[RMDB]
RNA sequence: GGGAACGACUCGAGUAGAGUCGAAAAGAGCAGCCGUGCCCGCCGCCCGGGCCCGCCGCCAGGGCGCACACGCUCCCGCCCCCCUACCCGGCCCGGGCGGGAGUUUGCACCUCUCCCUGCCCGGGUGUUACGUAUUAGCGUUCGCGCUAAUACGUAAAAAAGAAACAACAACAACAAC
Reactivity to DMS in 0.01 (KOAc 150mM, MgCl2 10mM, bicine 150mM(pH8.5), 24C), signal-to-noise 2, nucleotides 027 to 126: g010a180g030c040a060g000c080c070g010u000g020c070c020c030g030c080c020g000c030c040c000g000g030g000c010c050c060g000c080c030g020c030c020a030g020g000g030c050g030c110a090c130a070c110g000c020u000c000c010c000g000c010c000c020c010c000c010u000a050c040c010c030g010g000c000c010c040g030g000g030c040g000g000g000a030g000u010u010u030g010c060a060c050c050u030c000u000c010c000c010u020g050c020c000c000g000g010g040u010g000

Source information:
This 177-nucleotide RNA was probed chemically with DMS. Values are in units of 0.01, from 0 to 300, in steps of 10. The RNA was probed in 150 mM KOAc, 10 mM MgCl2 and 150 mM bicine (pH 8.5) at 24 C. It was measured as part of the RMDB library RFM100.